Description: Chemical mapping of a 207-nucleotide RNA with 2A3. For 2A3, 451 sequencing reads were counted. 2A3 adducts were read by reverse transcription with SuperScript II with manganese.
RNA sequence: GGGAACGACUCGAGUAGAGUCGAAAAUUCAUCAAUCCACUUGCAUGCGUCAUACAAAUCCGGUCGUGCCUCGCCAUGCUGCCAUUGCCAAUACGACUUUGAUGUGAUGCCCAGAUACAAGAACAAGCCAGAAUACGUGAAGGCACGCACCUUCGGCGCUGUUCAGCGGAUUCGUCCGCUGAACAGCAAAAGAAACAACAACAACAAC
Reactivity to 2A3 in 0.01 (KOAc 150mM, MgCl2 10mM, bicine 150mM(pH8.5), 24C), signal-to-noise 1, nucleotides 027 to 156: u070u110c030a010u000c000a070a020u010c010c050a060c080u050u000g000c040a060u120g040c070g110u040c040a120u020a240c130a110a000a070u090c030c030g030g000u040c000g020u000g010c000c000u010c000g000c020c000a070u070g000c020u020g010c030c030a070u130u100g010c000c030a050a000u190a160c090g030a120c050u170u000u060g130a110u010g040u020g020a100u010g000c000c000c040a090g040a070u260a070c080a010a000g070a160a060c000a010a050g010c060c000a050g100a050a130u040a040c050g100u100g010a120a000g000g000c000a040c000g000c020a040c000c000u040u030c060g050g000c010